[RMDB]
RNA sequence: GGGAACGACUCGAGUAGAGUCGAAAAGACGGUAAUGAUAAACCGUUCUGCUCAGGUUCAGGCUCCGGCAGGCCUGACGGAUACUGAGUCCGAAUGCCGUUAUCAGAUGAGUGACCAGCUCACGCUUGCCGCCGAUAUUAUUCGUAAUAUCGGCGGCAAAAGAAACAACAACAACAAC
Reactivity to 2A3 in 0.01 (KOAc 150mM, MgCl2 10mM, bicine 150mM(pH8.5), 24C), signal-to-noise 2, nucleotides 027 to 126: g000a000c010g040g040u010a040a110u180g090a300u170a210a140a000c000c000g020u100u000c020u000g000c000u000c000a000g080g020u150u020c050a020g000g000c000u120c080c000g000g020c020a030g000g010c000c000u000g000a000c000g000g000a060u160a260c010u000g000a000g000u010c030c000g190a070a050u000g000c000c000g000u000u070a160u240c050a010g210a250u060g020a040g050u030g120a300c100c020a020g000c000u000c000a000c000g030c070u000u000

Source: RMDB library RFM100, as collected in RNAgym. Chemical mapping of a 177-nucleotide RNA with 2A3. The 2A3 profile rests on 748 reads. The RNA was probed in 150 mM KOAc, 10 mM MgCl2 and 150 mM bicine (pH 8.5) at 24 C.